[RMDB]
RNA sequence: GGGAACGACUCGAGUAGAGUCGAAAACAUUGAAGUACCUGCUUUUCACGCUGUUCAUGCUGCCGGUGGACGGGCGCAGCAUCGACGACGGAGACCGGGACCACUCGGAGCCGUCCCCGGAGCACCGCGCCGAGAUGCAGCAGCGCCGCCAGCGCGGUACCUAACACAGAUUCGUCUGUGUUAGGUAAAAAGAAACAACAACAACAAC
Reactivity to 2A3 in 0.01 (KOAc 150mM, MgCl2 10mM, bicine 150mM(pH8.5), 24C), signal-to-noise 4, nucleotides 027 to 156: c060a060u100u200g110a120a030g040u080a120c020c060u080g040c040u130u030u090u150c090a050c080g020c030u060g050u150u150c080a080u110g020c000u040g070c050c020g070g000u050g040g070a080c060g060g010g010c020g000c040a040g010c000a050u050c020g160a160c040g010a010c010g000g040a070g040a080c000c000g000g000g020a050c050c000a150c120u100c110g080g040a030g030c060c050g010u040c050c000c000c030g030g010a070g040c020a030c030c010g040c030g030c070c020g090a080g000a030u060g010c010a010g020c020a060g000c030g000c020c010g010c000c020a030g020c040g000c000g040g010
Reactivity to DMS in 0.01 (KOAc 150mM, MgCl2 10mM, bicine 150mM(pH8.5), 24C), signal-to-noise 1, nucleotides 027 to 156: c110a150u010u000g000a080a150g030u010a140c060c000u000g020c000u000u000u000u010c050a190c020g020c040u000g020u000u000c060a100u000g000c030u000g050c030c010g020g040u000g030g000a080c010g020g010g040c010g000c040a190g000c010a050u000c020g030a060c050g000a070c020g010g000a110g050a300c040c020g000g000g010a120c090c120a080c070u000c080g000g020a120g030c010c040g000u000c010c020c000c000g040g010a090g000c020a220c000c030g010c000g020c060c010g030a110g000a040u000g020c030a040g010c040a090g040c000g050c000c000g000c120c010a040g000c080g030c030g000g020